The data come from the RNA Mapping Database (RMDB), library OK3TST. Structure probing data (DMS and 2A3) for a 207-nucleotide construct. Reactivities are given for positions 27 through 156. The reactions ran in a buffer of 150 mM KOAc, 10 mM MgCl2 and 150 mM bicine (pH 8.5), at 24 C.
RNA sequence: GGGAACGACUCGAGUAGAGUCGAAAACGCUAGACAGAAGAAAAGAGAAAGAGAGGGGGCACUAUCCAAUCGAAAAGAAAGCGAAAAAAGAAAUUUCAAUGCAGCGAAGCGUAGAAUGGAGAACGUAUGUUUGUGCUUGAAGUGCCAGCAAACAAAACUAGUCCCAUAAUUUCGAUUAUGGGACUAGAAAAGAAACAACAACAACAAC
Reactivity to DMS in 0.01 (KOAc 150mM, MgCl2 10mM, bicine 150mM(pH8.5), 24C), signal-to-noise 1, nucleotides 027 to 156: c070g050c040u010a100g000a160c030a080g000a130a090g000a090a140a120a140g020a170g020a160a060a100g000a140g000a120g000g050g040g070g000c060a070c090u000a110u040c020c060a110a130u000c070g000a080a070a040a180g030a060a120a100g000c010g030a020a090a040a070a060a060g000a040a040a130u010u000u000c010a070a080u000g000c000a010g030c040g020a030a030g000c060g050u000a060g030a040a120u000g020g010a070g010a070a020c150g030u000a070u000g010u000u000u000g030u000g140c060u030u000g000a040a110g000u000g000c010c000a210g000c060a010a010a060c000a010a080a070a090
Reactivity to 2A3 in 0.01 (KOAc 150mM, MgCl2 10mM, bicine 150mM(pH8.5), 24C), signal-to-noise 1, nucleotides 027 to 156: c000g020c020u060a040g020a030c000a000g090a110a000g010a000a120a020a000g040a000g010a010a090a000g010a000g000a000g020g030g000g070g030c030a020c050u040a010u090c000c000a070a020u060c020g020a080a040a000a000g070a070a020a000g010c010g080a080a000a000a000a020a000g080a010a120a060u100u120u030c020a040a030u130g030c000a020g040c020g120a070a020g000c000g020u020a070g070a090a060u020g000g000a040g000a010a010c040g040u050a020u050g070u070u030u010g000u000g000c060u020u080g010a020a010g010u000g040c000c000a000g060c000a010a010a000c130a010a220a000a000